[RMDB]
Description:
An RNA of 177 nucleotides, treated with 2A3 and DMS and read out base by base. The RNA was probed in 150 mM KOAc, 10 mM MgCl2 and 150 mM bicine (pH 8.5) at 24 C. For DMS, 7,943 sequencing reads were counted.

RNA sequence: GGGAACGACUCGAGUAGAGUCGAAAAUAAAUUGAAUUCAGCAGAUCGUAUUUUGACAGGUAGGCAGCGCUUUCCUUGCGCACAAAAGAACCGAGCAGAAUGAAGAGGUUGCACAUUGCCGCUGAACGACAAGCAUUUAAUUCGUUAAAUGCUUGUCAAAAGAAACAACAACAACAAC
Reactivity to 2A3 in 0.01 (KOAc 150mM, MgCl2 10mM, bicine 150mM(pH8.5), 24C), signal-to-noise 4, nucleotides 027 to 126: u060a010a030a030u080u120g080a020a070u040u060c020a030g010c010a020g090a160u040c030g020u110a110u040u170u080u100g080a060c030a030g000g070u080a030g080g000c030a010g000c020g010c050u050u070u050c000c000u020u090g000c020g000c050a010c030a040a110a010a010g070a040a010c020c020g030a020g000c010a010g010a180a050u090g020a070a040g040a030g080g040u040u060g030c030a030c020a090u060u110g010c030c030g020c030u020g030a040a010c030
Reactivity to DMS in 0.01 (KOAc 150mM, MgCl2 10mM, bicine 150mM(pH8.5), 24C), signal-to-noise 6, nucleotides 027 to 126: u010a040a080a090u010u000g010a100a140u000u000c050a040g000c030a090g010a070u000c070g010u010a080u000u000u000u000g010a080c090a080g010g020u000a060g020g010c090a090g010c030g010c040u000u000u010c050c050u000u000g020c020g020c020a060c140a040a040a080a080g010a080a070c070c030g010a110g020c050a070g000a060a040u010g000a080a090g010a100g020g010u010u000g010c060a060c100a090u000u000g010c070c040g010c050u010g000a060a080c270